[RMDB]
RNA sequence: GGGAACGACUCGAGUAGAGUCGAAAACGAUCUGGUCUCGACAUGAGAUGGUCAACAAAUCAAGUGCGGGAAUAUGGAAGUACAAAUAAUAAAAUAAAAACGAAACGAGGAAAUCAUAAGUAAGAGUUACAUCAAAUGAACUAAAACGGUGCACAAACAUCGUGAUCGACUUCGGUCGAUCACGAUGAAAAGAAACAACAACAACAAC
Reactivity to 2A3 in 0.01 (KOAc 150mM, MgCl2 10mM, bicine 150mM(pH8.5), 24C), signal-to-noise 1, nucleotides 027 to 156: c040g000a040u050c020u040g020g070u010c010u040c040g250a260c140a180u260g000a010g000a050u030g010g050u040c040a070a040c020a020a130a010u150c040a010a060g000u000g120c000g020g020g020a040a000u010a060u160g010g000a020a070g060u020a050c140a020a110a070u240a030a000u170a060a190a090a100u240a010a070a000a000a000c030g010a080a040a000c020g000a020g040g000a000a130a000u070c080a050u090a170a000g000u000a050a020g000a000g050u000u050a060c100a000u050c000a010a070a190u130g020a020a020c000u090a060a030a040a030c010g040g030u080g000c030a000c010a040a060a000
An RNA of 207 nucleotides, treated with 2A3 and read out base by base. For 2A3 the reverse transcriptase was SuperScript II with manganese. It was measured as part of the RMDB library OK3TST. The 2A3 profile rests on 456 reads.